[RMDB]
RNA sequence: GGGAACGACUCGAGUAGAGUCGAAAAAUGCUGACCGCAAGACCGUAAGUGAUGAUUUUUAUGAUCGCCUUGCCAGUGUGUACGGCAUUGAGCCAGAAACAAAAAAUGAGGAGGCAUAAUGGCCACUGGACUGACACUAACCACGGCGGGCGCCGCCGGCUCGAGAAUUUUUCGAAAUUCUCGAGCCAAAAGAAACAACAACAACAAC
Reactivity to 2A3 in 0.01 (KOAc 150mM, MgCl2 10mM, bicine 150mM(pH8.5), 24C), signal-to-noise 1, nucleotides 027 to 156: a000u030g010c020u030g050a080c000c000g000c080a050a050g030a120c070c080g030u050a070a040g070u050g060a080u030g000a000u070u020u000u020u230a170u300g060a130u070c010g020c000c000u050u160g050c070c030a070g040u010g040u020g020u090a060c010g080g030c000a060u020u070g010a020g030c030c000a050g080a070a070a050c100a000a190a050a070a000a020u210g010a040g090g030a020g030g020c020a000u130a080a050u040g010g000c000c050a030c040u040g000g060a080c000u000g020a000c020a000c030u010a170a050c070c000a040c010g030g000c010g000g000g000c030g060c000c020g070c010c060
An RNA of 207 nucleotides, treated with 2A3 and read out base by base. Conditions: 150 mM KOAc, 10 mM MgCl2 and 150 mM bicine (pH 8.5), 24 C. Reactivities are given for positions 27 through 156.